[RMDB]
Conditions: 150 mM KOAc, 10 mM MgCl2 and 150 mM bicine (pH 8.5), 24 C. Structure probing data (2A3) for a 207-nucleotide construct. For 2A3 the reverse transcriptase was SuperScript II with manganese.

RNA sequence: GGGAACGACUCGAGUAGAGUCGAAAACGCUGGGCCAUUCGCACCGUCCACAUGGAAGUUUCAGCGUACUGAAGCGCGCACGGUACGCUGAAACUGACGAAGUGUGGAUACGGUGGAAUGGCCUGUGCUGAAGCGCGCACGGCAACCGAAAGGUGCGGUGCCGAGUAUGCUUCGGCAUACUCGGCACAAAAGAAACAACAACAACAAC
Reactivity to 2A3 in 0.01 (KOAc 150mM, MgCl2 10mM, bicine 150mM(pH8.5), 24C), signal-to-noise 1, nucleotides 027 to 156: c070g050c050u130g000g000g000c020c000a010u030u010c070g110c300a000c000c000g080u000c010c010a010c030a030u050g040g000a060a020g000u010u000u010c000a000g000c030g000u000a000c000u050g050a180a030g000c030g000c010g020c000a000c030g040g010u000a000c010g000c000u000g000a000a000a000c000u000g030a000c040g080a010a000g020u000g010u000g000g070a180u210a270c000g010g000u000g000g000a000a000u000g000g000c000c000u000g000u000g000c010u080g040a140a000g000c000g000c000g010c000a000c010g140g010c010a050a100c020c000g070a100a030a020g100g030u050g020c090g010